[RMDB]
RNA sequence: GGGAACGACUCGAGUAGAGUCGAAAAAAGAAUGGAGGCCGUGUGGUGGCUAUAGUGCGCGGCAGCAGCGAUGAGAAGGCGGCUGAGCGGCUGCGCGCCGGUUUUGACAGCGGUGACGCGACCCUGCAAAGCAGGUUAUUUUCGAAUAACCUGCUUUAAAAGAAACAACAACAACAAC
Reactivity to 2A3 in 0.01 (KOAc 150mM, MgCl2 10mM, bicine 150mM(pH8.5), 24C), signal-to-noise 2, nucleotides 027 to 126: a020a010g100a030a000u120g050g050a050g070g000c020c040g040u100g050u080g140g080u060g020g000c020u060a090u130a170g130u110g030c050g000c000g120g000c010a000g000c010a010g000c000g060a080u080g030a060g060a190a040g100g050c020g010g010c020u030g030a030g050c050g040g000c030u020g000c010g000c010g000c000c000g040g000u020u050u040u110g070a030c000a010g020c010g010g050u030g020a030c020g000c010g040a040c010c000c000u000g020c030
Reactivity to DMS in 0.01 (KOAc 150mM, MgCl2 10mM, bicine 150mM(pH8.5), 24C), signal-to-noise 8, nucleotides 027 to 126: a070a080g000a120a070u010g010g010a150g020g000c040c050g020u000g020u000g010g020u000g010g010c050u000a070u010a070g020u000g020c030g010c020g010g010c020a040g010c030a060g010c030g010a140u000g000a140g010a120a100g010g010c040g010g000c020u000g010a190g020c030g010g010c020u000g010c030g010c030g020c010c020g000g000u000u000u010u010g010a090c110a070g000c040g000g010u010g000a120c060g010c040g000a090c020c010c020u000g010c120
Chemical mapping of a 177-nucleotide RNA with 2A3 and DMS. The RNA was probed in 150 mM KOAc, 10 mM MgCl2 and 150 mM bicine (pH 8.5) at 24 C. The data come from the RNA Mapping Database (RMDB), library OK2TRN. For DMS, 19,794 sequencing reads were counted.